[RMDB]
RNA sequence: GGGAACGACUCGAGUAGAGUCGAAAACGCUGGGCACGAGAACAGCUGAAGCAACAGCUCACUGAAGCGCGCACGGUGAGACAUGCGUAAGGCUGACGUGCCUGUGCUGAAGCGCGCACGGCAACCGAAAGGUGCGAAAGGGGUAUUCGUACCCCAAUCACCACGAAGGUUUCGACCUUCGUGGUGAAAAAGAAACAACAACAACAAC
Reactivity to 2A3 in 0.01 (KOAc 150mM, MgCl2 10mM, bicine 150mM(pH8.5), 24C), signal-to-noise 2, nucleotides 027 to 156: c010g000c000u010g010g000g000c010a010c000g080a080g070a300a050c020a010g000c020u100g020a150a010g030c000a010a160c040a300g100c010u000c000a000c000u040g030a160a070g010c000g000c000g000c000a010c000g050g000u010g010a010g130a160c070a070u060g000c020g030u020a020a010g010g000c000u040g030a030c000g000u000g020c010c000u000g000u000g000c020u040g020a110a060g020c020g030c000g000c000a010c010g010g030c000a000a030c010c000g030a070a030a000g000g010u010g020c000g000a110a030a060g000g000g010g000u020a020u010u120c250g060u100a020c000c000c000c000a000a040